RNA sequence: GGGAACGACUCGAGUAGAGUCGAAAAUACUGCUACACCGGCACUGUCGAUGUCCGCCAGCUAGCCAAGUGCUGCAGAGACAUCCUACGAUCGAAACGAGCUAACGUUACAAUAGAACACCCCCUCCAAAUACUAGUGGAUUCGUCCACUAGUAUUUAAAAGAAACAACAACAACAAC
Reactivity to 2A3 in 0.01 (KOAc 150mM, MgCl2 10mM, bicine 150mM(pH8.5), 24C), signal-to-noise 9, nucleotides 027 to 126: u080a010c020u020g030c010u030a010c020a010c030c020g020g010c020a020c050u050g030u070c040g050a110u090g070u100c060c020g030c050c010a020g010c050u130a030g010c020c020a230a080g040u050g070c020u010g000c020a010g040a010g010a060c010a060u040c000c010u060a060c040g060a080u100c050g050a090a040a060c040g010a020g040c050u070a060a050c020g030u050u080a050c070a120a110u100a150g110a110a010c020a060c030c000c000c000c010u030c020c020
Reactivity to DMS in 0.01 (KOAc 150mM, MgCl2 10mM, bicine 150mM(pH8.5), 24C), signal-to-noise 9, nucleotides 027 to 126: u040a100c040u000g010c030u010a150c050a060c050c070g000g010c030a080c030u000g010u010c070g010a100u030g010u030c070c010g000c080c020a040g010c070u020a070g010c050c050a070a130g010u020g010c030u000g000c020a070g000a190g000a070c090a070u010c010c030u010a070c090g000a090u010c070g010a060a070a080c060g000a070g000c070u010a050a090c050g010u010u010a060c100a070a070u030a070g000a070a090c070a120c010c000c000c000c010u010c050c070
About this RNA:
Structure probing data (2A3 and DMS) for a 177-nucleotide construct. The DMS profile rests on 38,626 reads. In probing experiments dimethyl sulfate is read out at A N1 and C N3, which are open when not base-paired. For 2A3, 40,790 sequencing reads were counted. The data come from the RNA Mapping Database (RMDB), library OK1LIB.